Background
The record gives the reactivity of an RNA of 177 nucleotides to DMS and 2A3. Conditions: 150 mM KOAc, 10 mM MgCl2 and 150 mM bicine (pH 8.5), 24 C. Values cover nucleotides 27 to 126. For DMS the reverse transcriptase was MarathonRT.
[RMDB]
RNA sequence: GGGAACGACUCGAGUAGAGUCGAAAAUACGUUCACCUCGGGCGGUCGUCUGUUCGGUGGCUUCUGGCAGAACAUGACGAAGGCCGAGCGGCGGGACCUUUUGCUGAUCGAGGGAGAGUCUUGCGUAGCAUAUGCGUCGUUUCGACGACGCAUAUGCAAAAGAAACAACAACAACAAC
Reactivity to DMS in 0.01 (KOAc 150mM, MgCl2 10mM, bicine 150mM(pH8.5), 24C), signal-to-noise 2, nucleotides 027 to 126: u000a070c090g000u000u000c050a150c080c020u000c020g010g000g020c020g030g020u000c000g010u000c020u020g020u020u000c010g050g000u010g040g020c020u010u010c170u010g010g040c040a060g000a040a050c080a070u020g020a040c020g020a050a120g010g000c000c000g000a050g020c080g000g030c080g000g000g000a050c030c020u010u020u020u010g020c020u000g010a080u000c090g000a110g000g010g000a100g000a100g020u020c080u010u000g030c070g020u000a080
Reactivity to 2A3 in 0.01 (KOAc 150mM, MgCl2 10mM, bicine 150mM(pH8.5), 24C), signal-to-noise 2, nucleotides 027 to 126: u080a000c010g020u000u050c050a050c070c000u020c010g040g010g000c070g120g120u020c010g030u020c050u100g000u000u010c060g220g060u130g140g000c010u040u010c060u250g100g000c000a010g030a140a050c050a100u130g000a020c010g030a010a000g020g030c010c000g010a000g000c020g030g000c000g010g030g060a070c000c000u070u100u100u160g020c010u050g010a090u110c040g040a020g000g010g000a070g000a000g050u010c010u050u080g000c050g070u060a010